[RMDB]
RNA sequence: GGGAACGACUCGAGUAGAGUCGAAAAGCGGUGCAAUCAUAAAUGUAUAUCAAUACAGGGAUUGCUUGUUGGAAUGUCAAGCAUGAACGAGGAAUUCCUAGUAAGCGUGUAUCAUUAGUUCGCGUUGCGAUUUCUCAUGAUUCGUCAUGAGAAAUCGAAAAGAAACAACAACAACAAC
Reactivity to 2A3 in 0.01 (KOAc 150mM, MgCl2 10mM, bicine 150mM(pH8.5), 24C), signal-to-noise 5, nucleotides 027 to 126: g020c020g030g030u070g030c050a060a100u080c040a150u160a200a130a030u050g040u020a020u010a000u090c050a060a010u010a030c010a020g000g020g000a000u000u040g140c000u000u000g010u030u020g050g200a100a050u040g050u100c100a110a060g050c010a030u030g050a020a010c010g000a010g010g060a010a010u000u000c000c000u020a100g010u030a060a010g040c020g020u030g020u020a030u140c010a040u020u080a020g060u050u070c040g000c030g040u050u070g030
Reactivity to DMS in 0.01 (KOAc 150mM, MgCl2 10mM, bicine 150mM(pH8.5), 24C), signal-to-noise 5, nucleotides 027 to 126: g010c030g020g010u000g020c030a050a050u020c050a100u010a080a030a030u000g010u010a010u000a050u010c080a270a180u000a010c010a040g010g010g000a030u000u000g000c010u000u010g000u010u000g010g010a150a050u000g010u010c230a100a160g010c020a020u000g010a040a030c030g000a030g010g010a030a030u000u000c000c010u000a080g010u010a010a040g010c110g000u010g000u000a030u010c040a020u010u010a080g020u000u010c050g010c080g010u000u000g000

The data come from the RNA Mapping Database (RMDB), libraries RFM100 and RFMREP.
The record gives the reactivity of an RNA of 177 nucleotides to 2A3 and DMS.
The reactions ran in a buffer of 150 mM KOAc, 10 mM MgCl2 and 150 mM bicine (pH 8.5), at 24 C.
For DMS the reverse transcriptase was MarathonRT.